RNA sequence: GGGAACGACUCGAGUAGAGUCGAAAAAGACGGAAACCCAUCGACUGUCACCAGAUGCUGCAUCACCUGAUCACUGAUGGCUCAACGGUAUCCGGCAGUACAACUGAAUACUUGUAGCUGCCUUUUGAAAAGGAGUUCAUCUUCGGAUGAACUCCAACCAAUAUCACGGGUUCGCCCGUGAUAUUGGAAAAGAAACAACAACAACAAC
Reactivity to DMS in 0.01 (KOAc 150mM, MgCl2 10mM, bicine 150mM(pH8.5), 24C), signal-to-noise 1, nucleotides 027 to 156: a060g020a190c000g010g000a110a080a200c040c030c000a230u010c020g020a090c060u000g020u010c040a070c010c040a050g030a050u000g020c030u010g010c000a080u010c070a100c040c000u020g000a130u010c040a130c140u000g000a020u000g010g000c030u010c020a100a070c040g000g000u000a040u000c000c040g040g000c000a050g050u000a040c060a100a070c040u000g010a070a100u010a050c080u000u000g050u000a070g010c000u000g010c000c110u000u020u000u050g010a010a070a090a300g000g010a040g030u000u000c000a010u000c000u000u000c300g010g000a020u000g010a010a000c010u000c000c010a000a010
Reactivity to 2A3 in 0.01 (KOAc 150mM, MgCl2 10mM, bicine 150mM(pH8.5), 24C), signal-to-noise 5, nucleotides 027 to 156: a000g050a020c020g060g030a120a070a040c010c010c010a040u070c060g090a070c020u060g000u040c010a020c070c020a030g020a120u080g020c040u050g020c000a010u020c030a040c030c010u050g050a060u050c020a030c040u020g000a040u030g090g000c030u030c080a050a090c050g040g000u070a070u080c050c030g010g010c000a010g000u010a000c010a040a000c030u190g070a180a080u140a170c050u040u040g020u030a040g110c000u010g000c000c000u120u170u020u090g060a050a050a020a040g010g000a000g000u000u000c000a000u000c000u020u040c200g130g000a000u000g000a000a000c000u000c000c000a000a000